[RMDB]
RNA sequence: GGGAACGACUCGAGUAGAGUCGAAAAGUAUCGGAGUAAGCUUCGCUAGACAGAGCCACAGAAGUGGGUUGAAGUGGGGCGUAAAGCAAGGACGGUCCAAGGGCAAGUCGACCUCCCUUGGCACGAGGACGUGCCUAAUUUUGAGUGGGGGAGGAUGCAAUUAUGCACACUUCGGUGUGCAUAAUUGAAAAGAAACAACAACAACAAC
Reactivity to DMS in 0.01 (KOAc 150mM, MgCl2 10mM, bicine 150mM(pH8.5), 24C), signal-to-noise 2, nucleotides 027 to 156: g000u010a090u000c060g020g010a130g040u000a150a160g030c010u010u010c030g030c050u010a080g000a180c050a100g000a140g030c020c000a130c050a170g030a090a190g040u000g060g000g020u000u000g000a140a140g030u000g000g050g030g000c030g050u000a050a100a090g040c100a110a080g030g030a110c090g010g020u000c020c040a020a150g000g020g000c070a080a110g000u010c060g000a050c050c000u000c010c000c000u010u000g010g010c040a030c030g000a140g000g020a260c020g010u000g000c030c010u030a050a090u000u010u000u020g020a180g040u010g010g000g020g020g020a110g000g020a120u000g010
Reactivity to 2A3 in 0.01 (KOAc 150mM, MgCl2 10mM, bicine 150mM(pH8.5), 24C), signal-to-noise 3, nucleotides 027 to 156: g120u070a090u090c050g030g000a070g050u110a080a070g030c000u060u060c070g010c050u030a010g020a050c020a050g110a040g080c000c010a020c010a060g220a300a010g080u150g000g020g020u050u080g050a100a050g010u050g020g000g010g010c020g020u080a050a010a050g020c050a020a060g050g010a010c030g000g020u020c050c010a040a040g000g000g000c020a000a090g040u070c010g060a040c000c000u000c010c000c000u010u050g000g000c010a000c000g020a070g100g120a050c020g010u000g020c000c010u070a140a190u030u160u180u210g090a060g020u170g000g000g000g000g000a010g000g010a000u070g010
Chemical mapping of a 207-nucleotide RNA with DMS and 2A3. The data come from the RNA Mapping Database (RMDB), library VIROID. In probing experiments dimethyl sulfate is read out at A N1 and C N3, which are open when not base-paired. The 2A3 profile rests on 1,977 reads.